[RMDB]
RNA sequence: GGGAACGACUCGAGUAGAGUCGAAAAAGCACUGGUACGAUACGUCGUACCAGUGCAGUCGUUGGGAUGGAACGCAAUUAAAUACAUGUGUGACGUGUAUUUUCGAACGACGUAAUUAUUUUUCAAAAUCACGCUAUCGUGUUCGCACGAUAGCGAAGUCAACUGUCUUGUUCGCAAGACAGUUGACAAAAGAAACAACAACAACAAC
Reactivity to 2A3 in 0.01 (KOAc 150mM, MgCl2 10mM, bicine 150mM(pH8.5), 24C), signal-to-noise 1, nucleotides 027 to 156: a000g030c040a010c000u040g000g000u000a000c000g000a000u030a000c210g110u010c000g000u040a000c000c000a000g000u000g000c010a000g000u040c000g010u010u010g090g060g070a140u060g020g190a150a000c010g000c080a020a000u130u050a010a000a000u020a030c060a030u030g130u060g070u200g280a170c070g000u000g000u040a020u000u020u030u080c030g010a020a000c010g010a000c040g000u030a040a040u090u120a040u040u120u040u050u060c100a060a040a030a230u290c010a020c080g010c010u000a000u000c000g010u000g000u010u000c160g000c040a010c000g000a000u010a000g010c000g000a000a010

Chemical mapping of a 207-nucleotide RNA with 2A3. It was measured as part of the RMDB library M2RFPK. As a SHAPE reagent, 2A3 marks flexible, mostly unpaired nucleotides at the ribose 2'-OH.